The record gives the reactivity of an RNA of 177 nucleotides to 2A3 and DMS. DMS adducts were read by reverse transcription with MarathonRT.

[RMDB]
RNA sequence: GGGAACGACUCGAGUAGAGUCGAAAAACGAUGGCUCUAAAGAUGUGUUCGUACACUUCUCUGCUAUCCAGAACGAUGGUUACAAAUCUCUGGACGAAGGUCAGAAAGUGUCCUUCACCAUCGAAAGUAAGUUACAUCUAUUCGUAGAUGUAACUUAAAAAGAAACAACAACAACAAC
Reactivity to 2A3 in 0.01 (KOAc 150mM, MgCl2 10mM, bicine 150mM(pH8.5), 24C), signal-to-noise 9, nucleotides 027 to 126: a000c090g040a070u100g060g020c050u060c070u240a150a150a030g040a070u070g050u010g030u140u110c080g010u040a000c010a000c000u020u010c040u000c000u140g000c010u020a020u010c000c000a000g010a090a020c130g010a050u040g070g090u200u170a090c070a060a110a030u010c020u000c000u010g010g010a010c060g150a080a040g050g060u200c010a000g030a010a020a000g030u000g000u000c000c000u010u020c010a020c020c020a000u010c010g030a030a010a000g100
Reactivity to DMS in 0.01 (KOAc 150mM, MgCl2 10mM, bicine 150mM(pH8.5), 24C), signal-to-noise 9, nucleotides 027 to 126: a090c130g020a050u010g010g010c090u010c080u010a080a080a300g010a130u020g040u040g010u010u010c180g010u020a040c000a010c010u000u000c130u000c020u000g000c020u000a190u000c000c020a030g000a030a090c190g010a020u000g010g010u020u040a110c230a070a130a030u000c010u000c000u000g000g010a040c220g000a060a070g000g010u030c010a010g000a040a010a040g010u000g010u000c020c020u000u000c050a090c030c030a000u000c010g000a090a070a090g010

Conditions: 150 mM KOAc, 10 mM MgCl2 and 150 mM bicine (pH 8.5), 24 C. As a SHAPE reagent, 2A3 marks flexible, mostly unpaired nucleotides at the ribose 2'-OH.